[RMDB]
RNA sequence: GGGAACGACUCGAGUAGAGUCGAAAACGUCAGCGCAGUGCCCGGCUGUUCUGUUGCGGCGCGUCUCCCCACAUAGCGCGGGAUGAAUGACACGACCCACACCACGAUGUUGAGGAAGGCCAGAAUAGUUUUAGUUUGUUUUCGAACAAACUAAAACAAAAGAAACAACAACAACAAC
Reactivity to DMS in 0.01 (KOAc 150mM, MgCl2 10mM, bicine 150mM(pH8.5), 24C), signal-to-noise 3, nucleotides 027 to 126: c100g030u000c030a040g020c070g000c050a070g020u000g020c030c000c030g010g000c030u000g030u000u000c050u020g020u010u010g030c040g010g020c040g000c040g000u000c040u010c010c010c000c050a080c130a130u000a070g020c060g010c080g020g000g000a070u010g010a070a060u000g010a080c030a080c110g000a120c050c010c040a050c080a070c020c040a070c040g020a070u000g020u000u000g000a100g000g010a060a090g000g010c040c040a110g000a080a080u010a100
Reactivity to 2A3 in 0.01 (KOAc 150mM, MgCl2 10mM, bicine 150mM(pH8.5), 24C), signal-to-noise 4, nucleotides 027 to 126: c020g040u020c030a020g010c010g000c050a020g010u030g080c000c010c000g050g010c030u040g020u050u030c030u030g090u090u130g030c050g020g010c010g010c010g050u010c040u020c010c010c030c010a050c020a070u220a030g080c060g000c060g010g000g020a060u110g080a090a080u120g020a030c010a000c090g100a130c000c000c010a020c000a010c010c000a040c040g060a050u040g000u080u080g000a030g050g030a040a050g050g010c010c020a020g050a080a090u160a100
This 177-nucleotide RNA was probed chemically with DMS and 2A3.
The DMS profile rests on 2,664 reads.
For DMS the reverse transcriptase was MarathonRT.
The reactions ran in a buffer of 150 mM KOAc, 10 mM MgCl2 and 150 mM bicine (pH 8.5), at 24 C.
Reactivities are rounded to 0.1 and cut off at 0 and 3.